The data come from the RNA Mapping Database (RMDB), library TTRDEL.
An RNA of 177 nucleotides, treated with DMS and 2A3 and read out base by base.
For DMS the reverse transcriptase was MarathonRT.
RNA sequence: GGGAACGACUCGAGUAGAGUCGAAAAGAUAUGGAACUAGAUCAAUGAGGUGUUAAUCGGAAACGAUUACACUGAGAUCAUUCCUAAGUCAAAGGUUGAAUCAGAGCUUCGGCUCUGAUUCAACCAAGGUAGGACUAUCGUUCGCGAUAGUCCUACCAAAAGAAACAACAACAACAAC
Reactivity to DMS in 0.01 (KOAc 150mM, MgCl2 10mM, bicine 150mM(pH8.5), 24C), signal-to-noise 1, nucleotides 027 to 126: g000a050u030a300u010g000g000a020a000c200u010a190g000a010u000c000a250a190u010g010a230g010g020u000g010u000u000a030a000u040c000g010g020a100a030a140c000g020a000u000u000a000c000a010c010u000g000a110g000a000u000c000a300u000u020c000c000u030a050a160g000u020c000a060a070a200g010g000u010u000g000a040a000u000c000a000g000a000g030c000u000u030c260g020g000c000u000c010u000g020a000u000u000c000a000a000c010c020a000a010
Reactivity to 2A3 in 0.01 (KOAc 150mM, MgCl2 10mM, bicine 150mM(pH8.5), 24C), signal-to-noise 1, nucleotides 027 to 126: g000a000u070a030u090g000g030a030a080c160u090a300g000a020u030c020a130a300u280g080a120g010g060u040g000u220u300a010a040u000c000g000g000a030a010a100c000g000a000u000u000a000c000a000c000u000g010a020g000a010u010c000a000u000u000c000c000u010a230a040g050u000c030a240a110a030g030g000u030u010g000a000a010u040c010a000g010a010g050c070u140u130c300g030g000c000u070c040u000g000a000u000u010c010a000a000c000c010a000a000
For DMS, 691 sequencing reads were counted. The reactions ran in a buffer of 150 mM KOAc, 10 mM MgCl2 and 150 mM bicine (pH 8.5), at 24 C.